Chemical mapping of a 177-nucleotide RNA with 2A3 and DMS.
[RMDB]
RNA sequence: GGGAACGACUCGAGUAGAGUCGAAAAGAGCGUCGAGAGACGAAGAGAAGUGCAUCGAUCCACAACGGAGAACGUAAUAAUGCACGCAUGUGGUUUAGUGUCCGGAACAACGGGCACAAGAGGCAGACACUCACUGCCAGUUCGCUGGCAGUGAGUGAAAAGAAACAACAACAACAAC
Reactivity to 2A3 in 0.01 (KOAc 150mM, MgCl2 10mM, bicine 150mM(pH8.5), 24C), signal-to-noise 1, nucleotides 027 to 126: g020a000g020c010g050u060c000g000a010g000a010g000a010c050g010a070a000g110a000g000a200a120g050u000g020c000a030u050c070g000a070u000c030c040a040c020a200a000c220g000g000a080g030a050a000c030g000u020a010a010u000a140a050u150g070c110a030c040g030c030a050u070g050u120g080g090u000u000u210a070g000u000g000u000c010c010g000g020a160a000c080a070a020c100g000g000g000c000a000c000a000a000g100a000g020g000c050a000g060a000
Reactivity to DMS in 0.01 (KOAc 150mM, MgCl2 10mM, bicine 150mM(pH8.5), 24C), signal-to-noise 2, nucleotides 027 to 126: g000a090g010c010g000u000c000g000a180g000a270g000a040c000g040a080a090g000a150g000a120a090g000u000g020c000a020u020c120g000a150u010c040c000a060c170a150a120c190g000g010a080g020a090a190c070g040u020a110a080u010a060a150u010g000c060a020c070g050c090a130u000g000u010g000g000u000u020u120a130g000u000g000u000c000c000g000g010a080a080c300a110a230c030g000g000g000c000a000c060a060a020g000a070g010g060c050a040g010a300